[RMDB]
RNA sequence: GGGAACGACUCGAGUAGAGUCGAAAAAUACAACAAACAAUAAAAGGUGAUGCGAAUGACAAAAAUUUGGUGUACAAGCUGAUUUUUUCUCAGCUUUGUCAUAUGCCGGCAAACGUCUGGUGAAGGAUCACCAUUCUGUGUUCGCACAGAAUGGUGAAAAAGAAACAACAACAACAAC
Reactivity to DMS in 0.01 (KOAc 150mM, MgCl2 10mM, bicine 150mM(pH8.5), 24C), signal-to-noise 3, nucleotides 027 to 126: a090u030a070c220a090a090c120a090a090a090c120a050a080u060a050a110a070a130g000g020u000g000a080u000g000c020g010a090a030u010g000a040c080a010a050a050a050a120u010u020u010g010g010u010g020u030a030c050a030a020g010c000u000g000a000u000u000u000u040u040u040c120u000c000a000g010c010u020u010u020g030u000c030a040u030a020u020g010c090c060g000g000c100a060a120a070c170g020u010c020u010g050g020u000g000a060a050g000g010a120
Reactivity to 2A3 in 0.01 (KOAc 150mM, MgCl2 10mM, bicine 150mM(pH8.5), 24C), signal-to-noise 3, nucleotides 027 to 126: a020u210a010c030a070a000c050a080a150a020c080a090a080u170a230a090a100a040g090g000u090g020a090u030g010c050g050a060a020u080g010a010c040a040a050a040a020a010u070u150u170g100g000u070g000u080a040c020a010a010g000c000u000g010a050u060u020u040u040u200u030c050u040c020a000g020c000u020u020u020g010u000c000a010u040a050u240g010c000c000g010g070c020a030a080a120c050g030u050c030u090g020g000u060g050a070a020g100g000a010